[RMDB]
RNA sequence: GGGAACGACUCGAGUAGAGUCGAAAAUCUGUUCCCUUCGGGGAACAGAACUGCGCCUGGACUUAAAGGCAUUGCACUUAAGAAAAUAAACAAACAAAAUAAGCCCUUCUGGUUUCGACCAGAAGAAGACUACAGUCAUAUUCGUAUGACUGUAGUCAAAAGAAACAACAACAACAAC
Reactivity to DMS in 0.01 (KOAc 150mM, MgCl2 10mM, bicine 150mM(pH8.5), 24C), signal-to-noise 2, nucleotides 027 to 126: u000c000u010g000u010u000c000c000c000u000u010c170g030g020g010g000a000a000c000a000g000a010a070c110u000g020c200g000c010c000u010g000g010a160c050u020u000a030a050a030g010g010c020a120u000u030g030c010a030c080u000u010a070a050g010a090a070a080a070u010a040a100a100c120a080a060a120c080a050a030a100a090u000a060a080g000c110c060c010u000u000c000u010g010g010u000u000u010c200g010a030c000c000a020g000a020a010g000a050a090
Reactivity to 2A3 in 0.01 (KOAc 150mM, MgCl2 10mM, bicine 150mM(pH8.5), 24C), signal-to-noise 4, nucleotides 027 to 126: u010c000u000g000u000u000c010c000c000u000u020c160g060g000g010g010a010a000c000a010g000a010a020c030u100g020c030g030c010c020u040g040g100a160c010u080u110a150a070a050g000g010c020a070u030u260g000c080a070c060u050u070a060a010g060a080a130a050a060u240a050a120a030c070a050a100a010c010a000a190a080a120u180a130a070g030c020c020c000u000u000c000u000g000g030u020u060u150c200g070a020c010c010a000g010a000a010g000a010a010
An RNA of 177 nucleotides, treated with DMS and 2A3 and read out base by base.
Reactivities are given for positions 27 through 126.
Source: RMDB library M2PK50, as collected in RNAgym.
The DMS profile rests on 2,246 reads.
DMS adducts were read by reverse transcription with MarathonRT.